RNA sequence: GGGAACGACUCGAGUAGAGUCGAAAAGGCAGUCUUUAUUUCGCCUUACAAUUCACAGAAUGCUGUGUCUCGUUCAAUGCUGGGUCUUACCACUCAGACUGUUGAUUCCUCACAGGGUUCAGAAUACUAAGAAGUUCCUUCGGGAACUUCAAAAGAAACAACAACAACAAC
Reactivity to 2A3 in 0.01 (KOAc 150mM, MgCl2 10mM, bicine 150mM(pH8.5), 24C), signal-to-noise 7, nucleotides 027 to 129: g010g000c030a060g070u070c110u130u300u100a280u100u230u180c040g000c000c000u000u020a060c110a060a110u020u050c030a040c030a130g030a080a050u130g190c010u000g000u010g010u030c050u070c210g060u040u030c020a020a000u020g010c000u000g000g010g010u010c040u030u070a090c010c010a020c000u020c000a010g010a130c020u120g020u020u000g030a070u120u090c010c010u010c010a000c000a010g040g050g000u000u000c000a010g010a030a010u090a160c080u070a150a030
Reactivity to DMS in 0.01 (KOAc 150mM, MgCl2 10mM, bicine 150mM(pH8.5), 24C), signal-to-noise 4, nucleotides 027 to 129: g000g070c000a100g000u060c120u070u050u010a110u020u080u030c020g040c000c040u010u010a090c170a190a050u010u050c060a100c120a030g000a070a050u030g060c020u020g040u020g010u040c190u050c190g020u040u020c030a010a020u000g030c000u010g000g000g000u010c030u000u080a200c250c200a050c020u000c020a010g010a060c060u080g050u000u000g020a050u010u050c050c110u020c000a060c060a080g000g080g000u020u020c000a000g000a030a040u000a110c170u050a010a150
The record gives the reactivity of an RNA of 170 nucleotides to 2A3 and DMS. The 2A3 profile rests on 11,179 reads. Conditions: 150 mM KOAc, 10 mM MgCl2 and 150 mM bicine (pH 8.5), 24 C. 2A3 is a SHAPE reagent: it acylates the 2'-hydroxyl of flexible nucleotides of all four kinds.